[RMDB]
RNA sequence: GGGAACGACUCGAGUAGAGUCGAAAAUACACAUACGCUAGAUACGUGGUACCUGAUCAUGGUACUGGAUCGCGAUCAGUGUAUGAUCCGUGAUCCAUGACGCACACAUGGCGAUCGUACAGUGAUCCGCGGAAGCGUAAUUCGUUACGCUUCCGCGAAAAGAAACAACAACAACAAC
Reactivity to 2A3 in 0.01 (KOAc 150mM, MgCl2 10mM, bicine 150mM(pH8.5), 24C), signal-to-noise 3, nucleotides 027 to 126: u110a000c030a000c010a090u090a050c000g010c070u080a050g040a190u100a100c070g020u070g020g010u020a020c000c000u070g040a210u140c060a040u100g030g000u010a020c000u030g020g020a000u040c020g000c030g040a010u010c020a030g100u040g130u290a110u050g000a010u000c080c020g020u050g030a030u000c000c010a020u050g030a000c070g020c040a030c000a000c000a190u110g070g000c000g050a090u030c050g010u020a040c020a090g070u020g040a020u000c040
Reactivity to DMS in 0.01 (KOAc 150mM, MgCl2 10mM, bicine 150mM(pH8.5), 24C), signal-to-noise 3, nucleotides 027 to 126: u000a050c070a110c080a110u000a080c030g020c050u000a070g000a150u010a040c050g030u010g000g020u000a020c010c000u000g000a110u000c190a070u020g010g000u010a010c030u000g000g010a040u000c000g030c040g000a040u000c000a030g000u010g010u000a060u010g000a020u000c050c120g020u010g010a050u010c000c010a030u000g020a120c050g000c060a090c090a160c120a080u010g000g020c060g000a040u000c030g010u000a060c060a110g000u000g000a030u000c040

The data come from the RNA Mapping Database (RMDB), library OK2TRN. The record gives the reactivity of an RNA of 177 nucleotides to 2A3 and DMS. 2A3 adducts were read by reverse transcription with SuperScript II with manganese. The RNA was probed in 150 mM KOAc, 10 mM MgCl2 and 150 mM bicine (pH 8.5) at 24 C.